[RMDB]
RNA sequence: GGGAACGACUCGAGUAGAGUCGAAAAUAACAAAUCUAAUCAUGUAUUGCACUGGAAAAGAAAUAUUCUCAUUAUGUAUUUUCCCCAAAUGAUGGCCCACCAUUGCAUUUGAAUACCUGCUGUCAAUCCUUAACGCUCUGUUCGCAGAGCGUUAAGGAAAAGAAACAACAACAACAAC
Reactivity to 2A3 in 0.01 (KOAc 150mM, MgCl2 10mM, bicine 150mM(pH8.5), 24C), signal-to-noise 2, nucleotides 027 to 126: u150a040a010c000a000a110a030u000c000u190a200a010u000c080a060u050g080u070a080u010u140g060c060a050c030u050g000g010a120a110a000a000g140a020a160a000u150a090u030u020c000u000c020a000u050u250a030u140g120u040a030u020u070u030u000c000c000c000c000a030a070a030u030g050a000u010g050g020c000c010c000a250c000c000a090u030u160g000c000a000u280u000u000g080a060a060u150a060c000c030u090g000c030u030g020u090c040a000a080u000
The record gives the reactivity of an RNA of 177 nucleotides to 2A3. Source: RMDB library RFM100, as collected in RNAgym.